[RMDB]
About this RNA:
This 177-nucleotide RNA was probed chemically with 2A3 and DMS. The data come from the RNA Mapping Database (RMDB), library M2PK50. Conditions: 150 mM KOAc, 10 mM MgCl2 and 150 mM bicine (pH 8.5), 24 C. DMS adducts were read by reverse transcription with MarathonRT.
RNA sequence: GGGAACGACUCGAGUAGAGUCGAAAACUCGAAUCUUUCGAGAUUCGAGACUCUCGAUGUGUCAAUAAGAUCGAAAAGAUCGCCGAGCAUAAAAUAGACACAAUGCUGCUUGAUUCGUCAAGCAGAACCCUAGGGAAGAUUUCGAUCUUCCCUAGGGAAAAGAAACAACAACAACAAC
Reactivity to 2A3 in 0.01 (KOAc 150mM, MgCl2 10mM, bicine 150mM(pH8.5), 24C), signal-to-noise 5, nucleotides 027 to 126: c000u000c000g000a000a010u010c000u030u120u180c200g070a000g010a020u000u000c000g010a000g010a010c030u020c000u010c040g070a160u130g010u000g000u020c010a040a090u120a240a080g000a010u010c010g050a180a180a100a080g000a020u010c000g020c030c030g070a040g020c050a100u140a110a150a080a050u120a070g010a010c000a000c000a020a050u110g010c010u000g000c010u000u020g020a010u030u050c210g040u010c090a010a010g000c000a000g010a020a020
Reactivity to DMS in 0.01 (KOAc 150mM, MgCl2 10mM, bicine 150mM(pH8.5), 24C), signal-to-noise 3, nucleotides 027 to 126: c020u000c010g010a010a000u000c000u000u000u010c100g030a020g030a020u000u010c010g000a020g000a090c120u000c000u010c010g010a140u000g020u000g020u000c000a120a070u010a100a110g020a020u010c000g000a100a080a090a160g000a020u000c010g010c250c070g000a030g010c300a050u000a030a040a050a080u010a080g000a010c000a000c020a100a090u010g000c020u000g000c010u010u000g000a020u000u000c210g010u000c000a000a000g000c010a010g000a070a120